[RMDB]
RNA sequence: GGGAACGACUCGAGUAGAGUCGAAAAGCAAUAAUGACUCGUUGUUUAGCUAUUCAUUCUUGUUUUAUAGAACGUGUGGAUUGGGAUAUAGAGUAUCCUUAUAUCUCACAUGAAAAGAAAUUGAAUUACCGUAUAGCGUUCGCGCUAUACAAAAGAAACAACAACAACAAC
Reactivity to DMS in 0.01 (KOAc 150mM, MgCl2 10mM, bicine 150mM(pH8.5), 24C), signal-to-noise 6, nucleotides 027 to 129: g060c060a060a060u040a040a030u000g000a040c110u020c130g030u000u000g060u040u000u060a140g000c100u030a020u000u000c060a000u020u000c020u000u000g050u030u050u020u040a100u080a070g030a100a160c050g020u020g020u000g010g020a000u010u050g040g010g020a020u020a070u040a180g060a130g060u040a020u020c010c030u000u000a080u020a050u040c000u000c010a010c040a020u070g030a060a090a040a000g000a020a050a080u010u020g030a100a050u030u060a090c190c100
Reactivity to 2A3 in 0.01 (KOAc 150mM, MgCl2 10mM, bicine 150mM(pH8.5), 24C), signal-to-noise 9, nucleotides 027 to 129: g020c020a010a060u110a080a080u130g070a060c050u050c130g020u020u060g080u120u140u150a020g030c030u020a030u010u000c010a010u010u010c010u010u030g140u140u120u060u070a210u040a080g150a120a050c030g000u010g020u000g020g010a000u010u050g000g000g000a000u010a000u010a070g230a050g180u000a010u000c000c000u050u030a150u010a010u060c050u010c050a000c010a010u050g060a050a050a010a000g110a020a080a040u100u110g040a060a050u100u040a080c030c060